[RMDB]
RNA sequence: GGGAACGACUCGAGUAGAGUCGAAAAGAUAUGGAGCGAGAAUUCGCUAUGAAGCCGCCCAUUCGGAAACGAAUGUAACAAGUGGAGCGAACUCGCUCCUAAGUCAAAACCCGCGUUCGCGCGGGAAGUUAUCAAUGCAGUUCGCUGCAUUGAUAACAAAAGAAACAACAACAACAAC
Reactivity to 2A3 in 0.01 (KOAc 150mM, MgCl2 10mM, bicine 150mM(pH8.5), 24C), signal-to-noise 3, nucleotides 027 to 126: g000a010u020a010u080g000g000a010g000c030g020a010g040a180a300u140u010c010g000c000u080a300u290g020a000a000g000c000c010g030c030c100c000a000u020u000c000g000g010a010a000a010c010g000a000a010u020g020u220a090a090c120a250a090g010u050g070g010a010g000c000g000a020a020c010u000c000g000c000u000c000c000u000a010a000g010u000c000a030a010a070a180c000c000c000g020c000g020u040u050c300g000c000g000c000g090g000g000a010a010
Reactivity to DMS in 0.01 (KOAc 150mM, MgCl2 10mM, bicine 150mM(pH8.5), 24C), signal-to-noise 3, nucleotides 027 to 126: g000a040u000a060u010g010g000a030g000c000g020a010g010a140a210u010u000c010g030c010u000a180u000g010a210a180g010c010c210g000c160c300c010a040u000u000c000g000g000a030a030a040c000g020a020a000u000g020u010a040a300c180a130a120g000u000g000g000a020g030c000g020a030a070c050u000c000g000c000u000c000c000u000a000a040g000u010c030a100a030a110a170c030c000c010g000c010g020u000u010c220g030c010g040c000g000g010g000a010a020